RNA sequence: GGGAACGACUCGAGUAGAGUCGAAAAACCUUUGUGUUGCCGACGAUCGUUCUCCCCACCAAUAACAUACUCCUAACCCAUUGGGUUAGGUAUUGAGGAACGAUUAGGCAACACUCUGGUAAACAUCUCGCGCGAUCUUCGGAUCGCGCGAGAUGAACAGUACGAAGUUGUUCGCAACUUCGUACUGAAAAGAAACAACAACAACAAC
Reactivity to 2A3 in 0.01 (KOAc 150mM, MgCl2 10mM, bicine 150mM(pH8.5), 24C), signal-to-noise 2, nucleotides 027 to 156: a000c000c000u020u010u020g000u030g000u020u000g000c000c010g040a190c240g020a050u000c000g020u020u000c040u120c010c010c040c000a090c060c000a080a040u170a180a050c100a100u160a150c090u020c020c000u000a010a010c000c000c050a210u060u300g010g000g000u000u000a000g000g000u000a050u020u030g010a000g040g000a000a000c020g020a000u070u030a030g000g000c000a000a010c000a000c000u000c000u000g000g000u030a090a020a110c010a000u000c000u000c000g040c010g030c000g010a030u010c000u080u120c260g090g010a030u030c040g000c000g030c000g010a000g000a000u000g000a000a000